[RMDB]
The data come from the RNA Mapping Database (RMDB), library M2RFPK. Chemical mapping of a 207-nucleotide RNA with 2A3. For 2A3, 795 sequencing reads were counted.

RNA sequence: GGGAACGACUCGAGUAGAGUCGAAAAAGCGAUGAUACGUCAUCGCAACGAUUGCCUGAUCGUAAAACAGGAGACGGCCUUGGCCGCGACCACGUAAAAAAGCGUAACGUGGUCUACGGACCACGAAAAAAGCGCGGAACGUUCGCGUUCCGCGCAACGAGAUUGAUCAGUUCGCUGAUCAAUCUCGAAAAGAAACAACAACAACAAC
Reactivity to 2A3 in 0.01 (KOAc 150mM, MgCl2 10mM, bicine 150mM(pH8.5), 24C), signal-to-noise 1, nucleotides 027 to 156: a000g000c000g000a000u010g010a020u060a120c200g070u010c000a000u000c000g000c020a020a050c000g010a000u050u010g020c010c010u000g000a010u010c000g160u150a000a020a000a000c000a020g010g030a010g070a070c080g040g030c030c000u100u130g120g010c000c000g000c000g010a030c010c080a030c040g000u050a070a050a050a110a180a000g110c090g010u030a000a120c010g000u000g000g000u000c000u000a000c020g090g000a060c000c000a030c050g000a080a010a000a010a000a070g000c020g000c000g000g000a000a000c000g000u040u080c150g000c030g120u000u010c020c000g070c030g000c000a000a000